[RMDB]
RNA sequence: GGGAACGACUCGAGUAGAGUCGAAAAGAUCAGGACCUUGACCGGUACCGUCGGGGCAUUCGCGAGUUCCAGGAGGGCACGGCGUGCUGCCGGCGGGACCUCGGUGAGGGAAUCGGUCACCGAUGCGGGCGAGGAGGGUUUUCGAACCCUCCUCGCCAAAAGAAACAACAACAACAAC
Reactivity to 2A3 in 0.01 (KOAc 150mM, MgCl2 10mM, bicine 150mM(pH8.5), 24C), signal-to-noise 1, nucleotides 027 to 126: g000a000u000c000a070g020g090a000c010c000u000u000g040a040c030c040g000g000u020a030c000c030g030u000c000g000g000g060g000c000a000u030u070c060g000c000g020a010g020u190u110c000c000a060g150g160a230g110g090g000c140a050c000g120g000c000g080u030g030c030u120g270c000c000g040g000c000g000g000g000a000c010c000u140c030g000g050u000g070a000g050g000g160a000a110u030c020g000g070u050c030a000c030c000g000a150u300g030c210g000

Overview:
An RNA of 177 nucleotides, treated with 2A3 and read out base by base. 2A3 adducts were read by reverse transcription with SuperScript II with manganese.